Notes:
This 177-nucleotide RNA was probed chemically with DMS and 2A3. For 2A3 the reverse transcriptase was SuperScript II with manganese. Source: RMDB library TTRDEL, as collected in RNAgym. The reactions ran in a buffer of 150 mM KOAc, 10 mM MgCl2 and 150 mM bicine (pH 8.5), at 24 C.
[RMDB]
RNA sequence: GGGAACGACUCGAGUAGAGUCGAAAAGAUAUGGAUAGCAUCGACAUGCUUGAGGGAUCGGAAACGAUCCGUAGAGCAACAGCGAGUGCUAUCCUAAGUCAAAUCCCAUGACUUCGGUCAUGGGAAACCAAACACUCAUCUUCGGAUGAGUGUUUGGAAAAGAAACAACAACAACAAC
Reactivity to DMS in 0.01 (KOAc 150mM, MgCl2 10mM, bicine 150mM(pH8.5), 24C), signal-to-noise 2, nucleotides 027 to 126: g000a080u000a300u000g020g010a000u020a000g040c040a110u000c020g000a000c080a300u000g010c020u040u010g000a300g000g010g020a000u000c000g000g010a070a080a230c040g020a010u000c010c000g020u000a210g000a010g000c020a020a090c300a230g000c000g030a060g060u010g000c000u010a010u010c000c000u020a020a150g000u000c030a090a160a050u000c000c000c000a010u040g010a030c000u000u010c280g010g010u010c000a000u010g000g000g000a000a020a050
Reactivity to 2A3 in 0.01 (KOAc 150mM, MgCl2 10mM, bicine 150mM(pH8.5), 24C), signal-to-noise 2, nucleotides 027 to 126: g030a000u070a030u150g000g000a000u020a010g020c030a020u020c010g100a140c100a110u200g040c020u080u030g000a070g000g000g110a010u000c010g030g040a000a100a040c010g000a000u010c000c010g000u020a020g020a010g060c010a010a020c020a020g030c010g020a110g260u090g000c020u000a000u000c000c000u020a080a000g040u010c020a050a010a180u040c010c000c000a000u010g000a000c020u080u130c300g150g000u000c010a000u010g010g000g080a030a000a020